This 170-nucleotide RNA was probed chemically with 2A3 and DMS. DMS adducts were read by reverse transcription with MarathonRT. Reactivities are rounded to 0.1 and cut off at 0 and 3.
[RMDB]
RNA sequence: GGGAACGACUCGAGUAGAGUCGAAAAGCCAGUUGGUGUUGUAGACACUGAGUGGGGUAACAUGUUAACGGGCAUUGCUGCACGUCCUCCACCAGGUGAACAGUUUAAGCACCUCGUGCCUCUUAUGAUAUCUAGUGCUUCGGCACUAGAAAAAGAAACAACAACAACAAC
Reactivity to 2A3 in 0.01 (KOAc 150mM, MgCl2 10mM, bicine 150mM(pH8.5), 24C), signal-to-noise 3, nucleotides 027 to 129: g060c000c010a000g080u070u100g000g000u070g000u000u040g120u020a000g030a060c000a020c010u000g030a030g130u040g000g000g040g030u090a080a020c030a060u080g030u130u090a060a030c000g000g000g050c050a080u070u300g030c050u150g020c070a000c010g010u050c070c000u000c050c030a010c000c000a000g090g000u040g030a060a010c040a060g000u050u040u060a060a000g010c000a030c010c000u000c090g050u070g070c060c000u080c020u120u120a170u200g080a020u080a000
Reactivity to DMS in 0.01 (KOAc 150mM, MgCl2 10mM, bicine 150mM(pH8.5), 24C), signal-to-noise 4, nucleotides 027 to 129: g000c030c010a100g020u010u020g020g020u010g070u050u010g070u000a120g020a140c120a040c040u030g000a250g030u020g040g040g030g020u000a080a090c250a080u060g000u040u030a130a030c050g000g040g010c100a100u050u070g030c270u020g050c010a030c040g050u010c200c030u010c010c010a030c040c050a100g030g020u010g010a050a080c180a110g000u030u040u020a010a000g000c060a050c040c050u040c100g000u000g010c120c080u020c130u010u050a050u030g030a000u040a070